Conditions: 150 mM KOAc, 10 mM MgCl2 and 150 mM bicine (pH 8.5), 24 C. An RNA of 207 nucleotides, treated with DMS and 2A3 and read out base by base.
RNA sequence: GGGAACGACUCGAGUAGAGUCGAAAAGGGACACAUUCACAUAGCAGCAAUUAAGGAUGUGUGUAGGUAGAUACGUGUGUGAAAGAAGGCACACAAAGAAGGGCUGUCUGGAGCCAGUGCACACUGGUUUGCUGUGGCUCGUGAAGGGCUGCUAUAAGUAGCCGGUAUUAUUCGUAAUACCGGCUACAAAAGAAACAACAACAACAAC
Reactivity to DMS in 0.01 (KOAc 150mM, MgCl2 10mM, bicine 150mM(pH8.5), 24C), signal-to-noise 2, nucleotides 027 to 156: g000g020g010a150c020a000c010a060u000u000c010a120c060a170u000a080g030c000a050g010c000a070a110u000u000a090a150g010g020a020u000g000u000g000u000g020u000a100g010g010u020a150g020a150u000a070c120g030u000g000u010g000u000g020a180a080a150g000a150a130g030g010c020a000c010a030c070a030a060a160g000a120a120g010g010g020c010u000g020u000c020u000g000g000a110g010c000c010a080g080u000g000c150a070c110a120c040u000g000g010u010u000u010g020c050u000g020u010g010g000c010u000c050g000u000g000a140a080g000g020g060c040u000g010c010u030a040u000a050a170
Reactivity to 2A3 in 0.01 (KOAc 150mM, MgCl2 10mM, bicine 150mM(pH8.5), 24C), signal-to-noise 4, nucleotides 027 to 156: g030g050g010a020c010a000c000a020u040u030c030a030c030a150u020a020g000c020a020g020c010a020a190u130u080a300a050g020g020a020u010g000u000g030u040g070u070a030g080g050u040a060g040a150u120a120c070g010u010g000u000g000u020g060a100a100a150g150a020a050g090g000c000a000c000a000c000a030a010a010g100a030a060g000g010g000c000u020g070u140c050u050g040g000a000g000c000c000a000g010u060g090c090a040c010a010c150u000g000g000u040u020u080g060c020u040g040u070g040g000c010u010c040g020u010g090a040a040g020g030g000c000u000g000c000u000a010u010a080a080